[RMDB]
RNA sequence: GGGAACGACUCGAGUAGAGUCGAAAAGAUAUGGAAAUCAGGCCUUCGAUAAGCUGGCAUCGGAAACGAUGCGCAGCUUUUGACGAAGACUGAUUUCCUAAGUCAAAGCAGGGGUUCGCCCCUGCAACGAAAUCUUGGAGUUCGCUCCAAGAUUUCGAAAAGAAACAACAACAACAAC
Reactivity to DMS in 0.01 (KOAc 150mM, MgCl2 10mM, bicine 150mM(pH8.5), 24C), signal-to-noise 1, nucleotides 027 to 126: g010a070u010a300u030g000g010a070a000a000u000c010a010g020g000c170c000u010u020c000g000a170u000a030a030g000c000u000g010g000c010a000u000c000g000g010a070a120a220c010g020a030u000g030c010g030c000a040g010c000u000u010u010u000g000a240c180g000a020a000g000a140c000u000g020a020u000u000u000c010c000u010a010a030g050u000c030a170a070a180g000c000a050g000g070g000g040u000u000c300g000c000c000c000c020u000g000c020a020a040
Structure probing data (DMS) for a 177-nucleotide construct. In probing experiments dimethyl sulfate is read out at A N1 and C N3, which are open when not base-paired. The RNA was probed in 150 mM KOAc, 10 mM MgCl2 and 150 mM bicine (pH 8.5) at 24 C. It was measured as part of the RMDB library TTRDES. Reactivities are given for positions 27 through 126.